[RMDB]
RNA sequence: GGGAACGACUCGAGUAGAGUCGAAAAGCUCUCGCUGCUUAAUCGAAGCACAGUAGAUUGAAGCUUAAUCCUUACACAAGGUGUUUGGACGAGACAUCACCCGGAAGCCGUGGCUUCGAGGCAAUCCGAACCGGUGGUGCAGAAAUGUCGGAGAUAGCAUGAGAGUUUACUUCGGUAAACUCUCAUGAAAAGAAACAACAACAACAAC
Reactivity to DMS in 0.01 (KOAc 150mM, MgCl2 10mM, bicine 150mM(pH8.5), 24C), signal-to-noise 2, nucleotides 027 to 156: g000c040u010c010u010c040g010c100u000g070c030u010u010a090a080u000c020g010a150a170g020c050a190c050a060g050u000a110g010a110u000u010g020a040a040g030c000u010u000a100a050u000c000c020u000u010a040c020a030c000a160a120g070g040u010g010u000u000u000g000g000a040c030g010a120g020a070c010a040u000c030a110c020c010c060g060g010a110a150g040c020c020g000u000g070g000c030u000u000c040g000a120g000g030c020a110a160u000c030c000g010a100a070c030c030g020g040u000g030g020u000g050c020a060g020a040a100a080u010g030u000c020g000g010a070g020a210u000a180g000
Reactivity to 2A3 in 0.01 (KOAc 150mM, MgCl2 10mM, bicine 150mM(pH8.5), 24C), signal-to-noise 3, nucleotides 027 to 156: g030c010u010c000u010c030g050c070u040g010c010u050u100a020a020u040c010g040a060a010g110c130a080c080a190g050u060a030g010a030u040u070g160a050a000g000c000u000u010a020a020u010c000c010u020u070a010c030a010c040a100a180g200g000u010g010u030u020u020g000g020a010c000g010a000g020a020c000a010u020c000a020c010c050c000g000g010a050a010g000c010c010g010u020g060g000c010u000u000c010g000a000g000g000c010a020a050u020c010c020g010a020a040c070c020g000g000u010g010g000u030g030c020a030g090a100a120a050u140g020u030c020g020g000a030g020a040u130a020g110